[RMDB]
RNA sequence: GGGAACGACUCGAGUAGAGUCGAAAAACAGGAACUCACCGGUUUGAACAGACGGUCAUGACGUGUUGUGUAUGUCCUUUUGAUUUUUGCUUUCAGACAACAUUUAGCUUAUACACAUGAGAUCGUACGCCACUCCUUCUUUCGAGAAGGAGUGGCGAAAAGAAACAACAACAACAAC
Reactivity to 2A3 in 0.01 (KOAc 150mM, MgCl2 10mM, bicine 150mM(pH8.5), 24C), signal-to-noise 1, nucleotides 027 to 126: a000c060a000g130g000a050a000c000u000c000a000c090c040g000g000u000u000u180g080a160a000c060a060g100a000c010g000g000u000c000a070u110g100a130c250g000u000g000u110u120g000u000g090u000a030u090g220u200c000c000u020u020u140u000g140a220u000u040u020u150u300g080c000u000u150u000c270a090g050a130c000a000a030c030a060u010u020u020a000g000c000u050u000a030u060a000c000a000c000a130u000g030a000g030a050u000c000g000u040a080